This 177-nucleotide RNA was probed chemically with 2A3.
For 2A3, 599 sequencing reads were counted.
The RNA was probed in 150 mM KOAc, 10 mM MgCl2 and 150 mM bicine (pH 8.5) at 24 C.
The data come from the RNA Mapping Database (RMDB), library OK1LIB.
For 2A3 the reverse transcriptase was SuperScript II with manganese.

RNA sequence: GGGAACGACUCGAGUAGAGUCGAAAAUUCAGGAUUAAUACAAAAGGAAUAUGUUAUGGGAAAGGCAUAUGUUUUAAAUGAAGAUUAUCCUAUUGUUUGUAUUGGCGCAGCGAAUGUAGAUCGUAAGGCCAAUCUACCCCUUCGGGGGUAGAUUGGCAAAAGAAACAACAACAACAAC
Reactivity to 2A3 in 0.01 (KOAc 150mM, MgCl2 10mM, bicine 150mM(pH8.5), 24C), signal-to-noise 2, nucleotides 027 to 126: u130u060c010a000g000g020a040u090u090a020a000u090a120c050a070a070a000a020g050g050a000a080u010a000u000g040u050u120a070u190g150g070g000a050a000a020g000g000c000a000u000a010u050g260u020u020u030u220a060a080a070u000g060a010a000g110a080u050u040a000u070c000c010u000a090u070u120g090u050u040u080g030u000a110u000u130g000g000c040g050c090a000g000c030g090a030a020u160g020u040a140g010a190u060c000g010u000a030a030g160